[RMDB]
RNA sequence: GGGAACGACUCGAGUAGAGUCGAAAAGAUAUGGAGAUCAUAAAGAGUGUAGGGAGCUGUCGCUCGGAAACGAGCGAGUAGCUUUGAUCUACAUGAUCUCCUAAGUCAAAAGCUCUGUUCGCAGAGCCUUUAACUUGGGGUUCGCCCCAAGUUAAAGAAAAGAAACAACAACAACAAC
Reactivity to DMS in 0.01 (KOAc 150mM, MgCl2 10mM, bicine 150mM(pH8.5), 24C), signal-to-noise 2, nucleotides 027 to 126: g010a030u000a300u010g000g000a000g000a020u000c000a130u010a160a190a180g000a220g020u000g010u020a040g000g000g000a000g020c010u000g010u000c000g030c000u010c000g010g020a040a040a080c010g000a010g010c010g000a010g020u010a000g020c000u000u010u010g000a080u000c020u000a040c120a020u010g000a020u000c000u010c000c000u000a000a070g000u020c040a070a150a110a160g010c010u000c010u000g010u010u000c200g060c030a010g010a040g020c030
Reactivity to 2A3 in 0.01 (KOAc 150mM, MgCl2 10mM, bicine 150mM(pH8.5), 24C), signal-to-noise 1, nucleotides 027 to 126: g000a030u060a040u130g000g000a000g000a010u000c020a050u250a300a300a040g290a100g150u180g070u080a120g110g140g140a050g020c020u020g040u080c000g010c000u000c000g040g000a060a010a010c000g030a000g040c000g000a030g050u060a000g000c000u240u180u140g060a070u010c000u010a000c000a060u050g010a000u000c020u000c000c000u010a070a000g000u020c020a000a000a210a170g000c000u010c010u010g090u140u100c240g020c130a000g000a020g000c050
The record gives the reactivity of an RNA of 177 nucleotides to DMS and 2A3. For DMS the reverse transcriptase was MarathonRT. Values cover nucleotides 27 to 126. The RNA was probed in 150 mM KOAc, 10 mM MgCl2 and 150 mM bicine (pH 8.5) at 24 C. It was measured as part of the RMDB library TTRDES. 2A3 adducts were read by reverse transcription with SuperScript II with manganese.